[RMDB]
RNA sequence: GGGAACGACUCGAGUAGAGUCGAAAAGAUAUGGACGCUCCUUUGACAUGAAGCCCAUCGGAAACGAUACCCUCACUUCAACAGCAAACAUGGAGCGUCCUAAGUCAAAGCUGUGUUCGCACAGCAACGAUACCGAAAAGUUCGCUUUUCGGUAUCGAAAAGAAACAACAACAACAAC
Reactivity to 2A3 in 0.01 (KOAc 150mM, MgCl2 10mM, bicine 150mM(pH8.5), 24C), signal-to-noise 3, nucleotides 027 to 126: g010a000u030a050u060g000g000a000c000g020c000u030c010c010u110u070u110g160a220c170a190u140g000a020a000g100c060c070c000a010u020c020g010g030a070a050a010c040g020a020u200a210c080c040c020u250c130a090c020u010u070c030a170a180c020a180g140c070a090a110a120c030a150u100g000g000a010g000c000g010u000c000c000u000a000a020g000u010c050a060a070a050g020c000u010g010u010g050u070u080c130g080c060a000c010a000g000c000a000a020
Reactivity to DMS in 0.01 (KOAc 150mM, MgCl2 10mM, bicine 150mM(pH8.5), 24C), signal-to-noise 3, nucleotides 027 to 126: g020a080u010a250u020g010g010a040c000g020c000u000c000c000u000u000u010g010a110c130a170u000g010a050a030g020c110c110c120a030u000c000g010g000a040a050a070c010g000a030u020a150c120c070c040u000c150a230c050u010u000c050a050a070c150a110g010c090a050a050a140c200a040u000g000g000a010g010c010g040u000c020c000u000a010a050g000u000c020a060a050a060g010c000u000g010u000g010u010u000c170g010c010a000c000a000g020c010a010a070

The record gives the reactivity of an RNA of 177 nucleotides to 2A3 and DMS. The DMS profile rests on 2,771 reads. For 2A3, 4,355 sequencing reads were counted. Values cover nucleotides 27 to 126. The RNA was probed in 150 mM KOAc, 10 mM MgCl2 and 150 mM bicine (pH 8.5) at 24 C. It was measured as part of the RMDB library TTRDEL.